[RMDB]
RNA sequence: GGGAACGACUCGAGUAGAGUCGAAAAUAGUGCAAAGGCCAGGUGUGUAUAAAACACCAGACUCAGUGGGUGGAUUCGAAAUAAACAUGAAAGAUGUCGAGAAGUUCUUCGAUAAACUUCAGAGAGAUCAAUACCGGGAGUUCGCUCCCGGUAUUGAAAAAGAAACAACAACAACAAC
Reactivity to DMS in 0.01 (KOAc 150mM, MgCl2 10mM, bicine 150mM(pH8.5), 24C), signal-to-noise 2, nucleotides 027 to 126: u000a110g030u000g000c060a100a080a110g010g020c000c020a060g010g010u000g000u000g030u020a060u010a070a070a100a070c000a010c020c040a030g000a060c050u010c080a090g020u000g000g010g030u000g010g000a150u000u000c090g040a050a090a140u000a080a050a070c110a040u000g000a090a050a100g000a170u000g000u020c010g010a190g000a060a140g010u000u000c070u010u020c070g000a100u000a090a060a060c050u000u010c020a090g000a170g000a090g010a080